[RMDB]
Conditions: 150 mM KOAc, 10 mM MgCl2 and 150 mM bicine (pH 8.5), 24 C. This 177-nucleotide RNA was probed chemically with 2A3 and DMS.
RNA sequence: GGGAACGACUCGAGUAGAGUCGAAAAUGGCAGAAAACCUCACCAGGAUGGUGGUGGAAGCUGCCCGAUGCUUUGUCGAACUUAGGACUGUUUGGGCAGAACAUGCAGUACCACUACUUAGGCCGAAGGACGCUAUCAUAUUCGUAUGAUAGCGUCCAAAAGAAACAACAACAACAAC
Reactivity to 2A3 in 0.01 (KOAc 150mM, MgCl2 10mM, bicine 150mM(pH8.5), 24C), signal-to-noise 3, nucleotides 027 to 126: u030g010g000c020a030g070a070a110a030a070c010c020u010c020a050c040c020a010g120g040a100u080g010g040u000g000g010u030g000g020a120a040g000c000u000g000c000c000c010g070a020u060g010c030u060u080u080g020u020c010g050a060a060c050u100u130a150g050g120a060c020u010g050u050u040u030g100g000g030c000a000g000a030a000c000a030u090g000c000a000g010u030a040c000c010a010c020u020a010c000u050u080a050g090g000c010c020g030a060a020
Reactivity to DMS in 0.01 (KOAc 150mM, MgCl2 10mM, bicine 150mM(pH8.5), 24C), signal-to-noise 5, nucleotides 027 to 126: u000g010g010c030a090g000a090a070a100a130c030c020u000c080a120c060c040a140g020g010a150u000g000g000u000g020g020u000g000g000a160a110g010c000u000g000c010c240c110g000a050u000g000c060u000u000u000g030u000c020g000a050a080c070u010u010a130g010g010a090c110u010g000u000u010u010g010g020g010c010a030g000a030a030c050a030u010g010c030a040g000u000a140c030c010a050c040u000a010c020u000u000a090g020g010c030c030g000a140a140
Annotation: DMS adducts were read by reverse transcription with MarathonRT. 2A3 adducts were read by reverse transcription with SuperScript II with manganese.